The record gives the reactivity of an RNA of 177 nucleotides to DMS and 2A3. It was measured as part of the RMDB libraries RFM100 and RFMREP. 2A3 is a SHAPE reagent: it acylates the 2'-hydroxyl of flexible nucleotides of all four kinds. The reactions ran in a buffer of 150 mM KOAc, 10 mM MgCl2 and 150 mM bicine (pH 8.5), at 24 C.
[RMDB]
RNA sequence: GGGAACGACUCGAGUAGAGUCGAAAACUUGUUGCGGGUGCAGCGUCAUCAAGAUUCACGUGUGCCGCACGGCACACGUAUCGGUUUUCAAGUGUAGUCAUCGUGCGUGAAUCUUGAUGAUGCUGCAGCUGGGAUGUAGCUUCGGCUACAUCCCAGCAAAAGAAACAACAACAACAAC
Reactivity to DMS in 0.01 (KOAc 150mM, MgCl2 10mM, bicine 150mM(pH8.5), 24C), signal-to-noise 1, nucleotides 027 to 126: c020u020u010g000u020u060g060c140g010g010g010u000g000c000a010g000c000g020u000c000a030u000c000a000a010g010a030u000u000c000a050c030g030u000g000u000g040c090c010g000c220a090c150g000g000c040a020c040a030c110g000u010a000u000c050g000g020u000u040u060u000c050a100a150g040u020g030u010a070g000u010c090a020u020c070g020u060g010c190g040u000g010a010a010u000c000u000u000g010a000u000g020a000u000g010c010u000g000c000a000
Reactivity to 2A3 in 0.01 (KOAc 150mM, MgCl2 10mM, bicine 150mM(pH8.5), 24C), signal-to-noise 2, nucleotides 027 to 126: c020u000u000g060u020u020g070c040g040g140g060u050g010c000a030g000c000g000u000c000a010u000c000a000a000g000a010u000u000c010a000c000g040u060g030u060g030c000c000g160c090a070c120g000g030c000a000c030a030c040g000u060a030u050c000g010g010u030u090u090u130c080a200a100g050u080g100u300a090g030u050c050a050u040c070g010u050g090c020g000u020g010a000a020u050c000u000u000g000a000u000g000a010u000g010c000u000g000c000a000